This 177-nucleotide RNA was probed chemically with DMS. For DMS the reverse transcriptase was MarathonRT. Conditions: 150 mM KOAc, 10 mM MgCl2 and 150 mM bicine (pH 8.5), 24 C.
[RMDB]
RNA sequence: GGGAACGACUCGAGUAGAGUCGAAAACGUCAAAACCACGCGAACGGUAGUCAAACCAUGAGAAUUGGUCAUUACAAUCCGGGUUUGCUGCACGGAAUGUAUCCACUAACCCCCAAUUUUGCAGGCGUGUUCACCAUCUCUUCGGAGAUGGUGAACAAAAAGAAACAACAACAACAAC
Reactivity to DMS in 0.01 (KOAc 150mM, MgCl2 10mM, bicine 150mM(pH8.5), 24C), signal-to-noise 1, nucleotides 027 to 126: c070g030u020c070a000a030a050a130c130c060a090c070g000c030g020a060a100c110g000g000u010a030g010u020c100a000a050a010c000c020a080u000g000a020g050a090a110u000u000g000g030u000c220a100u040u040a120c010a030a050u000c000c010g040g000g000u010u000u000g020c020u000g000c000a070c050g010g010a060a030u000g000u000a030u000c030c030a050c120u020a000a190c050c000c000c030c020a060a130u000u000u000u000g040c120a130g000g000c040g050